Conditions: 150 mM KOAc, 10 mM MgCl2 and 150 mM bicine (pH 8.5), 24 C. Structure probing data (2A3) for a 207-nucleotide construct. 2A3 adducts were read by reverse transcription with SuperScript II with manganese.

RNA sequence: GGGAACGACUCGAGUAGAGUCGAAAAUGUUAGUGCAUUAGAGAGACAGCAGGUUUCUUUGCUGGAGAUUAGGGGAAUGUCUGUGAUUGAGUUGGAUAACCCAUCUGUGAUGCUAUAGACUUGUUUUGGCUUGCUCUUGCUUAACUGCAGGUUUUAACCACUACGCAGUGUUCGCACUGCGUAGUGGAAAAGAAACAACAACAACAAC
Reactivity to 2A3 in 0.01 (KOAc 150mM, MgCl2 10mM, bicine 150mM(pH8.5), 24C), signal-to-noise 2, nucleotides 027 to 156: u170g000u050u010a070g030u050g090c030a070u060u130a020g040a000g040a020g030a080c000a020g080c020a010g000g060u040u080u000c020u080u220u070g030c040u020g080g030a050g020a040u050u080a060g000g000g000g080a050a120u100g050u100c070u020g020u100g050a080u140u070g020a060g090u030u060g000g000a040u050a160a140c000c010c010a010u000c000u060g100u010g070a100u090g050c050u100a040u020a090g060a120c000u060u020g060u060u160u010u120g040g000c000u010u070g020c020u020c010u040u060g020c070u100u040a040a030c010u070g020c050a010g070g000u000u010u000u060a100a080